The record gives the reactivity of an RNA of 307 nucleotides to 2A3 and DMS. Source: RMDB library POS240, as collected in RNAgym. For DMS, 8,058 sequencing reads were counted. DMS adducts were read by reverse transcription with MarathonRT. For 2A3, 5,155 sequencing reads were counted. The RNA was probed in 150 mM KOAc, 10 mM MgCl2 and 150 mM bicine (pH 8.5) at 24 C.
RNA sequence: GGGAACGACUCGAGUAGAGUCGAAAAGUUAGUAUCUUCGGAUACUAACAACUUGUCGGCUUCGGCCGACAAGAACUUAUGUCUACGGACAUAAGAGAACCUUGCUACGGCAAGGUUCACCUCAUUGCGUGAGCAAUGAGGAAGGUUGCCGAAUCCGAAAGGUACGGAGGAACCGCUUUUUGGGGUUAAUCUGCAGUGAAGCUGCAGUAGGGAUACCUUCUGUCCCGCACCCGACAGCUAACUCCGGAGGCAAUAAAGGAAGGAGUAGGACGUUAUUCGUAACGUCCAAAAGAAACAACAACAACAAC
Reactivity to 2A3 in 0.01 (KOAc 150mM, MgCl2 10mM, bicine 150mM(pH8.5), 24C), signal-to-noise 3, nucleotides 027 to 266: g010u000u000a000g000u000a010u000c000u020u060c270g070g000a000u000a000c000u000a000a000c000a000a010c000u000u010g030u000c010g020g020c020u110u060c300g130g000c000c000g000a000c000a000a000g000a000a000c000u000u000a000u000g000u000c000u000a030c220g110g000a010c010a000u000a000a010g050a010g000a010a000c000c000u000u000g000c020u020a090c300g150g010c020a000a000g000g000u010u000c000a020c000c000u000c010a000u000u000g000c020g020u100g050a070g030c000a000a000u020g020a000g000g010a000a070g120g040u080u060g010c000c010g020a020a050u020c010c000g060a090a040a010g020g000u000a010c020g000g000a000g010g050a070a060c090c050g010c070u100u150u030u120u260g050g000g000g010u000u040a050a040u060c000u010g000c010a010g010u040g220a120a020g100c010u000g000c010a010g010u020a050g000g010g000a010u090a110c010c000u040u020c030u040g010u000c000c000c000g000c010a010c000c000c000g030a120c060a030g000c010u010a030a040c000u000c000c000g010g020a000g000g000c000a030a000u120a090a040a010g060g030a020a010g050g040a060g100u190a090
Reactivity to DMS in 0.01 (KOAc 150mM, MgCl2 10mM, bicine 150mM(pH8.5), 24C), signal-to-noise 3, nucleotides 027 to 266: g000u000u000a020g000u000a000u000c000u000u030c140g000g010a020u000a010c000u000a000a000c000a120a170c000u000u000g020u010c000g010g020c030u000u020c190g020g020c000c000g010a000c010a010a000g020a210a300c010u010u000a010u000g020u000c000u000a130c210g000g010a010c000a000u000a000a010g000a290g010a010a000c000c000u000u010g010c020u000a090c270g030g030c000a000a010g000g010u000u000c000a050c000c000u000c000a000u000u010g000c000g000u030g020a210g010c020a000a020u000g000a010g000g000a080a020g010g030u000u000g000c000c000g000a090a210u020c000c000g000a100a110a130g010g020u000a050c000g000g010a010g000g000a120a130c300c180g000c070u030u000u010u000u000g010g010g000g000u000u010a060a080u000c010u010g000c000a000g010u000g030a120a120g010c000u000g000c000a010g000u000a030g000g000g000a010u000a050c050c040u000u000c040u000g010u000c000c010c000g000c230a110c010c000c020g010a040c300a040g000c000u000a110a210c010u000c010c010g000g010a110g000g000c000a030a030u010a070a080a120g000g000a020a010g010g010a300g010u000a170